An RNA of 177 nucleotides, treated with DMS and 2A3 and read out base by base. Source: RMDB library M2PK90, as collected in RNAgym. The RNA was probed in 150 mM KOAc, 10 mM MgCl2 and 150 mM bicine (pH 8.5) at 24 C. For DMS, 2,047 sequencing reads were counted. Reactivities are given for positions 27 through 126.
RNA sequence: GGGAACGACUCGAGUAGAGUCGAAAAUAACUCCUCCCGCGAGAGCCGCUAAGGUGGAAACGCUAUGCGGUACUGCCUGAUAGGGUGCUUGCGAGUCCCGCGGGAGGUCUCGUAGAAAAUAACCUAAUGCAAGUUAACUAUUCGUAGUUAACUUGCAAAAAGAAACAACAACAACAAC
Reactivity to DMS in 0.01 (KOAc 150mM, MgCl2 10mM, bicine 150mM(pH8.5), 24C), signal-to-noise 3, nucleotides 027 to 126: u020a090a120c110u000c000c000u000c000c000c000g030c000g000a020g030a130g020c010c000g000c020u000a140a080g010g040u000g010g000a090a050a110c010g030c010u020a300u020g010c020g000g010u000a160c050u000g010c000c020u000g000a170u000a110g010g010g020u010g000c090u010u000g020c010g020a110g020u000c050c010c000g030c000g010g010g000a020g000g020u000c020u000c060g030u020a100g010a090a060a070a130u010a100a140c040c050u010a060a180
Reactivity to 2A3 in 0.01 (KOAc 150mM, MgCl2 10mM, bicine 150mM(pH8.5), 24C), signal-to-noise 1, nucleotides 027 to 126: u080a000a000c020u010c040c010u000c000c000c000g000c010g050a060g000a010g110c020c000g040c060u090a110a020g020g020u090g000g040a160a300a000c000g000c050u100a010u250g060c000g000g060u040a030c010u020g000c020c000u090g010a150u160a060g120g020g040u100g060c070u060u060g060c030g000a030g020u010c000c010c030g030c000g010g020g030a010g020g000u010c020u000c020g000u060a050g160a070a130a010a060u150a040a090c030c040u080a090a030